[RMDB]
RNA sequence: GGGAACGACUCGAGUAGAGUCGAAAAAUUGACUUCAAUAGUCAUGAAAUUUGACCCAAUAGGUGUUUUCUGUCUUAUGGCUAAGACAUUUGCAACCUUAGGAUUCGAUGGUCUUAUGCCGCUGAGCCGUACUCCACGGUUUCGACCGUGGAGUACGAAAAGAAACAACAACAACAAC
Reactivity to DMS in 0.01 (KOAc 150mM, MgCl2 10mM, bicine 150mM(pH8.5), 24C), signal-to-noise 1, nucleotides 027 to 126: a010u010u000g020a010c000u000u030c280a080a030u010a000g000u000c000a000u030g000a210a090a030u020u040u010g000a210c000c020c050a000a050u110a120g020g010u000g000u000u000u000u000c000u000g000u020c000u000u050a150u120g000g070c020u000a000a050g000a040c000a050u000u000u000g030c080a000a020c000c060u050u050a120g050g080a110u020u020c000g010a000u000g000g000u020c000u070u010a060u000g000c010c000g020c300u020g000a040g030c120
Reactivity to 2A3 in 0.01 (KOAc 150mM, MgCl2 10mM, bicine 150mM(pH8.5), 24C), signal-to-noise 1, nucleotides 027 to 126: a060u040u060g000a000c000u000u050c070a040a300u070a140g050u000c030a010u120g080a000a150a000u150u130u140g070a050c000c010c000a030a100u210a120g150g010u060g050u000u080u030u090c000u000g070u060c000u040u090a010u150g080g000c030u000a010a000g000a000c000a000u030u000u080g070c010a000a000c000c000u000u120a140g020g100a300u050u000c000g000a060u120g180g010u060c010u010u000a050u250g010c000c000g000c100u020g000a000g080c140